[RMDB]
RNA sequence: GGGAACGACUCGAGUAGAGUCGAAAAGAACCUGCGCGGCUACUACAACCAGAGCGAGGCCGGUGAGUGACCCCGGCCCGGGGCGCAGGUCACGACUCCCCAUCCCCCACGUACGGCCCGGGUCGCCAACGAUCUACAUGUUCGCAUGUAGAUCGUUAAAAGAAACAACAACAACAAC
Reactivity to DMS in 0.01 (KOAc 150mM, MgCl2 10mM, bicine 150mM(pH8.5), 24C), signal-to-noise 2, nucleotides 027 to 126: g010a180a040c010c000u010g040c040g010c000g000g010c020u000a050c100u000a100c140a110a060c160c120a090g000a100g010c060g020a110g000g010c020c000g020g010u000g010a130g020u010g000a130c120c300c000c000g020g010c010c010c000g000g000g000g010c010g000c010a020g010g010u010c010a050c030g010a060c060u000c000c030c000c050a180u010c020c000c000c000c010a100c220g010u000a140c050g020g000c000c030c000g000g000g020u000c040g000c050c080
This 177-nucleotide RNA was probed chemically with DMS. Source: RMDB library OK2TST, as collected in RNAgym. The DMS profile rests on 1,401 reads. The RNA was probed in 150 mM KOAc, 10 mM MgCl2 and 150 mM bicine (pH 8.5) at 24 C.